Source: RMDB library OK3TST, as collected in RNAgym. The record gives the reactivity of an RNA of 207 nucleotides to DMS and 2A3. The 2A3 profile rests on 2,064 reads. The reactions ran in a buffer of 150 mM KOAc, 10 mM MgCl2 and 150 mM bicine (pH 8.5), at 24 C.
RNA sequence: GGGAACGACUCGAGUAGAGUCGAAAAACAAAAAUUGCGCUAAUAAUAAAUUGUAGGAAGUAAGAAGAUGACACCAGGUAGCAGGUCUCAGGCAGCCUCUUUCUGGCUUUAGACUCAUGAUGGCUUAGAGUAGUUUUGAACUCCCAGUAUCAUCUUAAAUACGGUAAAUGUUCGCAUUUACCGUAUUAAAAGAAACAACAACAACAAC
Reactivity to DMS in 0.01 (KOAc 150mM, MgCl2 10mM, bicine 150mM(pH8.5), 24C), signal-to-noise 3, nucleotides 027 to 156: a090c020a070a080a050a110a050u010u000g020c010g000c060u010a070a070u010a080a100u000a070a060a130u010u010g010u010a110g000g000a060a080g000u000a060a120g000a060a100g000a070u000g000a100c070a050c020c030a050g000g020u000a070g010c110a030g050g020u010c040u020c050a070g030g030c080a100g000c030c020u000c040u000u010u010c050u000g040g020c030u000u000u000a120g000a070c020u000c040a080u000g010a100u000g020g020c080u000u000a060g020a060g020u000a040g050u010u000u000u000g010a050a090c060u000c000c000c010a120g010u000a050u010c060a120u000c010u000u010a110
Reactivity to 2A3 in 0.01 (KOAc 150mM, MgCl2 10mM, bicine 150mM(pH8.5), 24C), signal-to-noise 3, nucleotides 027 to 156: a010c060a020a080a010a010a020u100u090g000c040g000c020u030a060a020u090a150a050u090a110a200a070u150u110g050u070a050g020g050a060a010g010u110a030a080g050a040a020g040a060u070g020a000c010a010c020c010a010g030g000u050a030g020c080a000g020g030u040c030u020c040a030g010g010c020a010g010c010c020u030c060u030u120u030c040u020g010g000c000u020u050u030a030g010a020c000u010c050a020u090g030a040u060g040g020c010u030u000a000g000a010g040u070a020g010u030u000u050u100g030a050a030c040u000c020c000c000a000g020u030a040u190c030a000u040c070u070u110a000